[RMDB]
RNA sequence: GGGAACGACUCGAGUAGAGUCGAAAAGAAGCCGGAAUCGCUAGUAAUCGCAGGUCAGCUAUACUGCGGUGAAUGUGUUCCUGAGCCUUGUACACACCGCCCGUCAAGCCACGAAAGCGGGGGGCACUUAACCCUGACUGUUCGCAGUCAGGGUUAAAAAAGAAACAACAACAACAAC
Reactivity to DMS in 0.01 (KOAc 150mM, MgCl2 10mM, bicine 150mM(pH8.5), 24C), signal-to-noise 2, nucleotides 027 to 126: g000a110a090g030c010c040g010g020a060a000u000c020g010c000u010a050g000u000a030a010u000c030g020c000a010g000g000u000c090a050g010c130u000a030u000a040c010u000g000c010g000g000u020g000a090a060u000g000u000g000u000u000c010c000u050g000a100g000c000c000u000u000g000u030a070c100a150c180a180c030c040g000c040c000c010g000u020c080a090a200g000c070c060a090c100g000a050a100a150g040c010g010g000g000g010g000g020c080a030c100
Reactivity to 2A3 in 0.01 (KOAc 150mM, MgCl2 10mM, bicine 150mM(pH8.5), 24C), signal-to-noise 3, nucleotides 027 to 126: g080a020a000g020c000c030g000g070a020a010u250c070g000c000u030a010g010u010a000a000u000c000g000c000a000g010g010u140c090a050g010c060u150a110u170a180c000u000g000c000g000g000u000g000a030a040u040g000u020g000u000u010c000c000u000g010a020g020c020c020u010u050g130u120a030c120a000c010a040c070c020g080c030c000c000g080u120c030a070a080g010c030c030a160c130g090a170a030a000g010c030g000g000g010g000g030g000c010a050c010
Chemical mapping of a 177-nucleotide RNA with DMS and 2A3. Conditions: 150 mM KOAc, 10 mM MgCl2 and 150 mM bicine (pH 8.5), 24 C. DMS adducts were read by reverse transcription with MarathonRT. Reactivities are given for positions 27 through 126. The data come from the RNA Mapping Database (RMDB), library RFM100.